Structure probing data (2A3 and DMS) for a 307-nucleotide construct. 2A3 adducts were read by reverse transcription with SuperScript II with manganese.
RNA sequence: GGGAACGACUCGAGUAGAGUCGAAAAGGUCUGCUACGGCAGACCAGUGUGACGUUCGCGUCACACAAGUGCGGCUUCGGCCGCACAGUCGAGAGCUUCGGCUCUCGACACUGCCUGCGUGAGCAGGCAGAGGUUACGCUUCGGCGUAACCACAUUGAGCGUACGCGCUCAAUGACACAAUCUUCGGAUUGUGACUUCCACUACGGUGGAAGAAGGAGAUCUUCGGAUCUCCAAGAGGUUAGAGUCGACCUGUUAAACAGACUCAUAGCUAUCCAUUCGUGGAUAGCAAAAGAAACAACAACAACAAC
Reactivity to 2A3 in 0.01 (KOAc 150mM, MgCl2 10mM, bicine 150mM(pH8.5), 24C), signal-to-noise 9, nucleotides 027 to 266: g000g000u000c000u000g000c010u040a040c250g130g000c010a000g000a000c000c000a000g000u000g000u000g000a010c010g010u030u060c290g030c010g120u010c000a000c000a000c000a030a070g000u010g000c010g010g000c010u070u120c260g130g010c000c000g000c000a000c000a000g000u000c000g000a000g000a000g000c010u060u070c300g110g000c000u020c000u000c000g000a000c000a000c000u000g000c000c000u000g000c010g050u130g070a070g000c000a000g000g000c000a000g000a010g000g000u000u000a000c000g000c000u030u080c220g120g000c000g000u000a000a000c000c000a010c000a000u000u000g000a000g000c010g010u040a050c240g020c010g000c150u010c000a000a000u020g020a000c000a000c000a010a000u000c000u040u080c170g090g000a000u000u000g000u000g050a060c000u000u000c000c000a000c000u040a030c260g120g000u010g000g000a000a000g010a020a050g000g010a000g000a000u010c010u050u090c220g110g000a000u000c000u010c000c000a010a030g120a010g030g010u030u110a030g000a000g010u000c000g000a000c000c010u050g210u140u220a080a020a010c040a030g000a000c000u000c000a000u030a000
Reactivity to DMS in 0.01 (KOAc 150mM, MgCl2 10mM, bicine 150mM(pH8.5), 24C), signal-to-noise 2, nucleotides 027 to 266: g010g010u000c000u000g000c000u010a140c140g010g000c010a000g020a000c000c000a030g000u000g010u010g000a010c010g010u010u020c200g020c000g000u000c010a020c000a000c040a060a130g000u000g010c050g010g010c010u010u020c260g020g030c000c000g000c020a010c000a020g010u000c000g010a000g000a010g010c030u000u020c240g010g000c010u000c000u000c020g000a000c020a050c000u020g020c000c020u000g040c000g000u020g000a210g010c000a010g020g000c000a010g010a090g000g010u000u000a000c000g000c000u000u000c200g040g030c000g010u000a000a000c000c030a100c030a000u000u000g000a000g000c000g000u010a110c130g030c010g040c000u000c000a000a000u000g000a300c010a030c000a010a020u000c000u000u030c120g000g000a000u000u000g020u000g000a300c030u000u000c020c000a000c000u000a090c160g010g020u000g000g010a000a000g000a170a090g010g000a000g000a010u010c010u000u010c130g000g020a010u000c010u000c010c000a070a070g000a010g000g020u010u000a120g000a050g000u000c000g000a040c010c000u000g000u010u020a040a010a030c120a270g000a010c000u000c000a130u010a090
The reactions ran in a buffer of 150 mM KOAc, 10 mM MgCl2 and 150 mM bicine (pH 8.5), at 24 C.